Notes
Chemical mapping of a 177-nucleotide RNA with 2A3 and DMS. As a SHAPE reagent, 2A3 marks flexible, mostly unpaired nucleotides at the ribose 2'-OH. Values cover nucleotides 27 to 126. For 2A3, 1,331 sequencing reads were counted. It was measured as part of the RMDB library OK2TRN. DMS (dimethyl sulfate) methylates the pairing face of unpaired adenines and cytosines.

RNA sequence: GGGAACGACUCGAGUAGAGUCGAAAAACUACCGUUCUACACCGCAAAUUACAGAUCUUGCUAACCGCGUGAUCGACCAAGCAGUAGGGCGGAUCGCAGGGACUCGGUUGGAAUUAGAAGGCAUGCGUGCGUAAGCGAAAUUCGUUUCGCUUACGCAAAAAGAAACAACAACAACAAC
Reactivity to 2A3 in 0.01 (KOAc 150mM, MgCl2 10mM, bicine 150mM(pH8.5), 24C), signal-to-noise 1, nucleotides 027 to 126: a000c050u120a150c000c000g000u000u000c010u070a030c030a070c000c170g000c030a090a080a040u110u100a070c070a030g040a070u000c000u000u130g030c000u050a070a110c080c050g050c060g060u040g000a020u020c020g040a030c060c000a120a010g030c010a030g030u010a020g000g000g000c010g020g030a020u060c030g000c020a000g090g000g000a050c020u020c060g000g100u040u070g050g000a090a050u040u020a100g070a150a030g030g000c040a010u030g000c020g050
Reactivity to DMS in 0.01 (KOAc 150mM, MgCl2 10mM, bicine 150mM(pH8.5), 24C), signal-to-noise 3, nucleotides 027 to 126: a050c080u010a150c030c010g000u000u010c000u010a040c000a100c150c190g020c040a070a080a050u010u000a070c130a220g000a010u000c010u000u000g000c010u010a050a110c260c210g000c030g030u000g030a050u000c030g020a120c250c160a070a120g000c030a060g030u000a040g010g020g000c030g000g000a030u000c050g010c050a040g000g000g000a060c030u000c000g010g020u010u000g020g000a050a050u000u000a080g020a100a090g000g020c050a060u000g000c140g020